[RMDB]
RNA sequence: GGGAACGACUCGAGUAGAGUCGAAAAAGCAGGAGUACGCUCCUCCAUGGGUAGACGAAUUGACCCCAACUGAAGUUCAAUUCUAACGUUAAAAGGAGUUUUAUAUGACUGGACGUACGCGUCCAGAUGACGAUUUCAUUCUUCGGAAUGAAAUCAACUUAACGUAAUGCUUCGGCAUUACGUUAAGAAAAGAAACAACAACAACAAC
Reactivity to 2A3 in 0.01 (KOAc 150mM, MgCl2 10mM, bicine 150mM(pH8.5), 24C), signal-to-noise 3, nucleotides 027 to 156: a000g130c130a010g000g010a010g030u060a020c140g030c100u010c000c010u000c020c010a070u070g010g010g000u130a080g090a200c080g000a020a030u000u000g020a020c020c020c000c040a120a060c180u250g030a020a010g040u090u020c000a000a000u000u000c010u080a130a150c170g070u110u160a050a080a020a040g120g020a060g010u020u050u100u110a150u060a060u130g100a070c010u010g000g000a000c010g010u020a040c190g040c020g110u030c000c000a000g000a000u040g050a020c100g000a000u000u010u000c000a000u000u010c000u000u050c150g140g000a000a000u010g010a000a000a000u000c000a000a000
Reactivity to DMS in 0.01 (KOAc 150mM, MgCl2 10mM, bicine 150mM(pH8.5), 24C), signal-to-noise 2, nucleotides 027 to 156: a070g030c070a050g000g020a130g060u010a070c220g030c000u000c060c000u010c020c080a180u000g030g000g020u010a150g010a130c120g060a050a050u000u000g000a040c040c020c000c000a100a210c200u010g000a070a040g040u000u000c050a000a000u000u000c020u010a100a070c070g000u000u000a150a060a030a110g020g020a140g000u000u000u000u000a090u010a200u010g010a140c020u010g020g000a000c000g090u000a060c300g020c050g040u000c000c000a000g020a050u000g000a160c100g000a010u000u020u000c010a000u000u010c010u010u000c300g060g000a070a000u020g000a020a010a020u000c020a050a120